[RMDB]
RNA sequence: GGGAACGACUCGAGUAGAGUCGAAAAUACUUAGUACGCGCGUAGUUACAGGCAUUCCGGGUGCAGCAACUGACGCGGAAGACUUUUCCCAGAGUGUGCGCUUCAACUGGCGUGCUGAGUAGUGCACGAAUUGCACGUACGUUCGCGUACGUGCAAAUAUCAUCAAAUAAUUCGUUAUUUGAUGAUAAAAAGAAACAACAACAACAAC
Reactivity to 2A3 in 0.01 (KOAc 150mM, MgCl2 10mM, bicine 150mM(pH8.5), 24C), signal-to-noise 6, nucleotides 027 to 156: u080a000c000u010u010a000g010u020a000c000g010c000g000c020g030u030a010g010u020u010a030c040a060g070g000c010a030u070u110c120c140g220g060g010u020g000c040a050g010c020a040a020c010u140g070a050c020g010c020g030g050a020a020g190a190c030u130u150u050u010c000c000c000a000g010a010g010u100g000u010g010c010g010c010u030u060c080a280a300c070u030g020g000c010g010u010g000c000u000g000a000g000u050a010g010u020g010c010a000c030g060a060a100u050u010g000c000a010c000g000u000a000c010g000u020u050c140g000c000g080u000a000c000g000u000g000c000a000a000a000
Reactivity to DMS in 0.01 (KOAc 150mM, MgCl2 10mM, bicine 150mM(pH8.5), 24C), signal-to-noise 4, nucleotides 027 to 156: u000a050c050u000u000a060g020u000a080c030g020c000g010c040g030u010a050g030u000u010a040c010a180g040g010c020a060u000u000c030c300g000g030g140u000g010c020a300g010c010a020a040c010u010g020a040c040g010c000g020g020a110a130g010a080c100u000u010u000u010c030c010c010a240g010a130g030u000g020u000g010c030g010c020u000u000c060a070a130c100u000g020g010c050g030u000g010c000u000g000a070g020u000a060g040u010g000c020a040c050g020a090a170u000u000g000c020a000c000g030u010a010c000g030u000u010c290g040c020g010u000a000c010g020u010g000c000a000a010a100

This 207-nucleotide RNA was probed chemically with 2A3 and DMS.
It was measured as part of the RMDB library M2RFOK.
For 2A3 the reverse transcriptase was SuperScript II with manganese.
Reactivities are given for positions 27 through 156.